[RMDB]
RNA sequence: GGGAACGACUCGAGUAGAGUCGAAAAGUGUGCUAUACCAGUAAGGUUGAAUGAAUCAACCCUUGGUGCUUAGCUUCUUUCACCAAGCAUAUUACACGCGGAUAACCGCCAAAGGAGAAAAGAUGAACUGCCCGACGAUUCUUCGGAAUCGUCGGAACUAAUCCUAUGUGUUCGCACAUAGGAUUAGAAAAGAAACAACAACAACAAC
Reactivity to DMS in 0.01 (KOAc 150mM, MgCl2 10mM, bicine 150mM(pH8.5), 24C), signal-to-noise 3, nucleotides 027 to 156: g030u010g030u000g000c030u000a110u000a220c020c010a190g030u030a120a080g000g040u000u010g010a050a140u010g030a210a230u000c020a010a030c000c000c040u010u000g010g000u000g010c060u010u000a040g020c020u000u000c000u000u000u000c010a070c020c030a040a090g000c040a110u000a060u000u000a010c040a080c080g040c020g040g020a150u000a090a110c000c010g020c020c050a030a070a120g000g010a150g010a100a090a090a130g000a070u010g010a070a080c070u000g020c120c000c060g020a000c000g000a020u000u000c000u000u000c240g070g020a000a020u000c000g020u000c000g010g000a000a030
Reactivity to 2A3 in 0.01 (KOAc 150mM, MgCl2 10mM, bicine 150mM(pH8.5), 24C), signal-to-noise 6, nucleotides 027 to 156: g040u040g020u040g030c010u030a020u050a140c010c020a050g050u130a100a100g020g010u010u020g030a110a160u160g090a090a180u060c000a000a000c010c000c000u010u020g000g000u020g020c050u020u050a020g010c000u060u030c010u020u060u050c080a100c040c000a030a010g030c010a050u050a070u200u250a080c090a020c040g010c010g040g000a080u090a300a220c020c000g020c010c030a100a090a030g070g020a070g050a050a120a040a020g090a050u140g050a060a080c030u080g050c020c000c000g000a000c000g000a000u000u000c010u040u100c200g040g010a000a000u000c000g000u000c000g000g000a000a000